The record gives the reactivity of an RNA of 170 nucleotides to DMS and 2A3. It was measured as part of the RMDB library 15KLIB. 2A3 adducts were read by reverse transcription with SuperScript II with manganese.
[RMDB]
RNA sequence: GGGAACGACUCGAGUAGAGUCGAAAACCUCCAGAGGACCCCUUCAGCGAACAGAAGAGCCCCGCACGGGAUAGGAGUAAGACCAUAGCGAUGGGGGGAGAUGCUAGGAGUUGGGGGAGACCGAAGCUACCACGCCCCUUCGGGGGCGUGAAAAGAAACAACAACAACAAC
Reactivity to DMS in 0.01 (KOAc 150mM, MgCl2 10mM, bicine 150mM(pH8.5), 24C), signal-to-noise 2, nucleotides 027 to 129: c040c020u050c110c070a120g000a240g130g010a150c180c050c040c040u010u010c100a000g020c090g010a100a120c090a020g060a030a140g000a250g000c100c070c030c060g010c180a170c180g050g000g000a050u010a110g000g000a020g000u000a070a220g040a140c030c050a150u000a300g010c070g070a050u090g000g020g030g000g020g000a060g000a140u060g040c020u020a090g000g010a300g000u000u080g000g000g050g000g070a040g040a060c070c100g060a180a020g000c050u030a050c090
Reactivity to 2A3 in 0.01 (KOAc 150mM, MgCl2 10mM, bicine 150mM(pH8.5), 24C), signal-to-noise 2, nucleotides 027 to 129: c000c000u000c020c160a020g030a120g000g020a000c000c090c000c000u060u070c000a010g030c000g100a030a000c040a020g130a130a020g010a090g040c000c000c040c100g220c090a070c010g000g280g000a120u150a120g000g060a030g050u170a050a050g040a090c020c020a010u100a000g090c050g010a110u150g030g000g000g040g020g000a020g010a080u090g040c120u060a040g000g040a010g020u070u030g000g000g000g000g000a000g040a020c020c030g000a000a000g000c000u030a040c000